[RMDB]
This 177-nucleotide RNA was probed chemically with 2A3 and DMS. The data come from the RNA Mapping Database (RMDB), library OK2TRN. For DMS the reverse transcriptase was MarathonRT. For DMS, 4,649 sequencing reads were counted. The RNA was probed in 150 mM KOAc, 10 mM MgCl2 and 150 mM bicine (pH 8.5) at 24 C. DMS (dimethyl sulfate) methylates the pairing face of unpaired adenines and cytosines.

RNA sequence: GGGAACGACUCGAGUAGAGUCGAAAAGAUUAACCAGGCUAAAACUUAGGGUGUCAAAAGUUUGGGGAAUACGAAAUAUCUUGUAAAGCCGCAAUCAAAACCUCAUUUACUAAAACCCAUUGUACACGGUUGUGAAGCGAUUCGUCGCUUCACAGCUAAAAGAAACAACAACAACAAC
Reactivity to 2A3 in 0.01 (KOAc 150mM, MgCl2 10mM, bicine 150mM(pH8.5), 24C), signal-to-noise 2, nucleotides 027 to 126: g030a020u060u080a020a070c030c000a000g030g000c030u100a120a070a040a040c050u080u120a080g050g050g020u020g060u060c040a010a010a010a050g010u010u040u030g000g000g000g000a040a040u060a050c000g010a040a120a060u180a060u070c060u050u050g020u050a020a040a060g010c030c040g000c070a020a050u060c040a030a040a020a140c010c010u000c010a000u020u020u030a020c010u010a000a020a070a050c020c010c020a040u020u110g030u020a040c080a010c100
Reactivity to DMS in 0.01 (KOAc 150mM, MgCl2 10mM, bicine 150mM(pH8.5), 24C), signal-to-noise 5, nucleotides 027 to 126: g010a110u000u010a110a180c040c030a080g010g010c050u000a070a080a090a070c050u010u010a090g010g010g010u010g010u000c100a040a070a090a070g010u010u010u000g000g000g000g020a070a100u010a070c090g010a070a070a090u000a100u000c070u010u000g010u000a050a110a100g010c030c040g000c070a050a040u020c080a070a040a090a050c030c010u000c050a040u000u000u000a040c070u000a040a070a070a090c020c010c010a130u000u000g010u010a060c180a080c190